[RMDB]
RNA sequence: GGGAACGACUCGAGUAGAGUCGAAAAACUAUUUGUUCUAUAGCAAACAAACCCGAAACACAGGAUAUAUUUGUUAUAUAUGCUUUGUGGGACACAGCUGUUAGGACGUGAGCCAUCAGGGUCCAAACGUCCACUAGGUAUUCGUACCUAGUGGACGAAAAGAAACAACAACAACAAC
Reactivity to 2A3 in 0.01 (KOAc 150mM, MgCl2 10mM, bicine 150mM(pH8.5), 24C), signal-to-noise 4, nucleotides 027 to 126: a000c080u080a110u100u070u150g000u010u010c030u040a030u110a030g040c030a060a070a050c050a100a060a070c010c010c020g090a080a130a000c020a010c010a010g000g060a020u000a010u000a030u070u120u120g170u290u000a000u000a010u010a000u020g160c010u020u090u020g010u030g020g010g010a020c020a000c000a140g010c020u040g050u040u060a050g000g020a010c020g080u090g050a030g030c020c020a040u100c050a080g050g000g080u000c010c000a040a070a040
Reactivity to DMS in 0.01 (KOAc 150mM, MgCl2 10mM, bicine 150mM(pH8.5), 24C), signal-to-noise 2, nucleotides 027 to 126: a090c140u020a190u000u000u010g000u020u020c010u000a030u010a040g000c020a080a110a090c240a100a110a100c000c010c010g000a170a170a030c030a040c110a030g010g000a030u000a000u000a010u000u010u030g000u070u020a030u000a000u000a020u000g010c000u000u000u000g010u010g030g000g020a060c060a110c240a140g000c080u000g020u020u000a060g010g010a010c010g070u010g040a170g020c010c000a080u010c050a080g000g000g000u070c030c080a020a070a210